[RMDB]
Chemical mapping of a 170-nucleotide RNA with DMS and 2A3. The data come from the RNA Mapping Database (RMDB), library 15KLIB. For 2A3 the reverse transcriptase was SuperScript II with manganese. The reactions ran in a buffer of 150 mM KOAc, 10 mM MgCl2 and 150 mM bicine (pH 8.5), at 24 C.
RNA sequence: GGGAACGACUCGAGUAGAGUCGAAAAGAUCCCGGGCUUACCCACGGGAACUGCUGGGUUCCCCUGAUGUCCAGUCCCUCCCCGUUCCUGGAGAAGGGAGACUCGGGAACGCCUAGCAUCUGAGGGAGAACGGGGGGAUUCGUCCCCCCGAAAAGAAACAACAACAACAAC
Reactivity to DMS in 0.01 (KOAc 150mM, MgCl2 10mM, bicine 150mM(pH8.5), 24C), signal-to-noise 3, nucleotides 027 to 129: g070a160u040c000c000c000g050g010g040c000u040u080a100c070c040c030a100c050g030g050g000a020a110c150u010g000c040u020g000g000g000u010u000c120c040c000c040u040g030a000u070g020u030c040c130a120g040u040c030c000c000u030c030c000c010c040g020u020u040c050c060u060g000g050a080g020a080a020g020g050g040a000g000a000c020u020c000g000g070g000a080a050c150g000c060c000u000a060g020c110a070u040c060u010g000a010g040g000g020a050g020a070a070
Reactivity to 2A3 in 0.01 (KOAc 150mM, MgCl2 10mM, bicine 150mM(pH8.5), 24C), signal-to-noise 6, nucleotides 027 to 129: g070a090u030c010c000c010g000g020g010c090u100u150a140c000c000c000a040c050g000g000g020a020a070c040u070g030c010u050g010g040g000u010u010c030c040c020c040u080g060a080u210g080u030c010c020a020g060u000c010c010c010u020c030c010c000c010g090u100u070c020c050u130g040g010a110g010a110a090g010g020g000a020g010a020c000u000c020g000g000g020a020a010c060g050c010c000u030a010g010c000a030u000c030u060g040a150g010g050g000a030g020a040a030